The record gives the reactivity of an RNA of 177 nucleotides to DMS and 2A3. The reactions ran in a buffer of 150 mM KOAc, 10 mM MgCl2 and 150 mM bicine (pH 8.5), at 24 C. 2A3 adducts were read by reverse transcription with SuperScript II with manganese.

RNA sequence: GGGAACGACUCGAGUAGAGUCGAAAAAGACCUAACGGCACGGGUAACACCGUGAUCCAGUAGGUUGGCAUUCUGUUCGGGUGGAAGCUCGGGUGAGAACUCGAGUGGACCGAGUGGAAAAGAAAAUGAAAGUAAGAUACUUCGGUAUCUUACUUUCAAAAGAAACAACAACAACAAC
Reactivity to DMS in 0.01 (KOAc 150mM, MgCl2 10mM, bicine 150mM(pH8.5), 24C), signal-to-noise 3, nucleotides 027 to 126: a180g010a020c000c000u010a070a070c040g000g020c010a000c000g000g000g000u000a130a110c190a280c000c000g010u000g010a090u010c020c000a120g010u000a010g000g000u000u000g010g010c120a100u000u000c000u000g010u000u000c010g000g000g020u000g010g010a210a180g000c000u000c010g010g010g000u000g000a220g000a150a010c000u000c000g000a020g000u000g000g000a010c000c000g010a010g020u000g000g000a010a020a050a090g000a060a060a080a120u000
Reactivity to 2A3 in 0.01 (KOAc 150mM, MgCl2 10mM, bicine 150mM(pH8.5), 24C), signal-to-noise 3, nucleotides 027 to 126: a000g010a010c000c000u010a050a010c030g000g000c000a000c010g010g010g000u010a020a010c040a020c020c000g000u010g000a030u030c000c000a050g060u010a000g000g010u010u010g040g050c040a090u020u020c010u020g040u020u010c030g050g000g000u300g120g050a020a000g000c000u000c000g000g000g010u020g020a080g010a020a010c000u010c010g000a000g010u010g000g010a000c000c000g000a010g000u030g010g030a020a050a050a060g100a040a110a020a020u100